[RMDB]
RNA sequence: GGGAACGACUCGAGUAGAGUCGAAAAUCAGAGCCAGCUGUAAUUGUACCGAAACCUCUAGAUCCAAAUUCUACUGAGCUUUCAUCUAUGCCUUCUAUGAGGUUAGAAGAUCUUAUUUUUCUCGGUACUCUACAGGGGGAUUCGUCCCCCUGUAGAGAAAAGAAACAACAACAACAAC
Reactivity to 2A3 in 0.01 (KOAc 150mM, MgCl2 10mM, bicine 150mM(pH8.5), 24C), signal-to-noise 7, nucleotides 027 to 126: u070c010a010g010a000g050c040c000a020g010c020u030g050u100a080a180u220u100g050u040a040c010c020g030a120a070a040c020c010u030c030u050a050g020a100u060c040c030a040a060a110u140u040c020u040a070c030u040g020a010g050c010u040u030u100c030a050u020c030u080a080u180g050c010c010u030u050c030u050a090u300g040a030g030g010u020u030a020g020a060a020g020a020u030c050u090u130a150u180u200u020u050u010c040u010c010g050g010u060a050
Reactivity to DMS in 0.01 (KOAc 150mM, MgCl2 10mM, bicine 150mM(pH8.5), 24C), signal-to-noise 2, nucleotides 027 to 126: u020c050a080g000a040g000c030c060a040g060c030u030g000u010a050a130u040u000g030u000a000c030c030g000a090a070a090c050c020u010c030u010a050g010a030u000c070c050a130a030a120u010u020c010u010a070c080u010g000a110g010c140u010u020u010c030a040u020c040u010a030u020g010c050c000u000u030c040u060a030u030g010a010g030g000u030u010a030g000a050a050g020a060u000c110u000u020a120u020u000u000u040u020c030u000c010g000g050u000a040